[RMDB]
Source: RMDB library OK1LIB, as collected in RNAgym. Structure probing data (DMS and 2A3) for a 177-nucleotide construct. For 2A3, 2,499 sequencing reads were counted. The DMS profile rests on 4,913 reads. Values cover nucleotides 27 to 126.
RNA sequence: GGGAACGACUCGAGUAGAGUCGAAAAGAAAGGCGCGCCUGACAUCUAAAUGGAGUUGCCGCGAGGCCCUCUUACGUCGAGAUCCUGGGACGCCUGUUGGCAGACGAUCGCGGUCAGUCCACAGAAAGGGUUAAGUAAUCUUCGGAUUACUUAACCCAAAAGAAACAACAACAACAAC
Reactivity to DMS in 0.01 (KOAc 150mM, MgCl2 10mM, bicine 150mM(pH8.5), 24C), signal-to-noise 3, nucleotides 027 to 126: g000a060a070a030g010g000c020g010c130g000c010c030u000g020a130c140a050u010c050u030a080a130a130u000g000g010a040g010u020u010g020c020c020g030c150g020a150g020g020c010c220c010u000c030u000u020a090c120g000u030c080g010a030g000a050u010c070c030u020g000g010g020a130c040g010c020c040u000g020u010u010g020g000c030a080g010a060c070g000a130u010c040g000c070g010g010u020c090a090g010u010c000c070a030c120a040g000a120a090a130
Reactivity to 2A3 in 0.01 (KOAc 150mM, MgCl2 10mM, bicine 150mM(pH8.5), 24C), signal-to-noise 3, nucleotides 027 to 126: g040a010a070a000g030g020c000g010c000g060c010c000u010g000a030c020a040u020c020u120a110a100a110u160g020g000a030g050u090u080g040c010c000g000c010g030a030g030g000c000c050c010u010c000u070u100a050c050g020u010c040g030a010g010a080u050c000c030u080g010g000g000a000c000g000c020c020u020g020u030u030g010g000c000a020g000a040c010g040a060u030c010g010c040g050g000u000c010a050g080u010c000c020a060c020a070g120a080a090a020